[RMDB]
RNA sequence: GGGAACGACUCGAGUAGAGUCGAAAAACCCAUGAACCAUGUCAGGUCCUGACGGAAGCAGCAUUAAGUGGAUCAUCAUAUGUGCCGUAGGGUAGCCGAGAUUUAGCUAACGACUUUGGUUACGUUCGUGAAUUACGUUCGAUGCUUAGGUGCACGGGGUCUAAUAAUGCUUCGGCAUUAUUAGACCAAAAGAAACAACAACAACAAC
Reactivity to DMS in 0.01 (KOAc 150mM, MgCl2 10mM, bicine 150mM(pH8.5), 24C), signal-to-noise 2, nucleotides 027 to 156: a140c000c000c010a110u010g000a080a090c000c020a070u020g020u000c040a060g060g020u020c040c020u000g000a080c030g010g020a160a120g020c020a070g000c030a100u010u020a080a170g040u000g020g010a130u000c090a110u020c040a090u010a140u000g020u010g010c030c040g030u000a120g010g000g000u000a050g030c010c020g020a130g010a090u000u000u010a110g000c120u010a060a110c070g000a030c040u000u000u020g010g010u010u000a080c030g000u010u000c050g000u000g010a080a070u010u000a070c050g020u000u000c040g030a170u000g020c060u000u020a080g000g000u000g010c030a020c030g020g010
Reactivity to 2A3 in 0.01 (KOAc 150mM, MgCl2 10mM, bicine 150mM(pH8.5), 24C), signal-to-noise 3, nucleotides 027 to 156: a000c000c000c000a060u060g050a020a030c040c030a060u110g060u040c020a000g020g090u090c010c000u010g120a040c010g010g020a070a000g010c060a000g000c020a040u040u190a220a000g060u030g030g080a030u010c020a030u010c000a030u110a030u290g020u070g060c000c030g040u020a030g000g090g000u020a010g000c020c030g060a040g030a090u120u100u110a090g030c050u030a030a000c020g050a050c040u080u060u070g040g000u060u060a040c000g000u020u050c030g000u050g120a140a120u140u060a080c060g010u020u060c000g020a050u050g020c000u050u090a020g040g080u090g040c030a010c050g090g000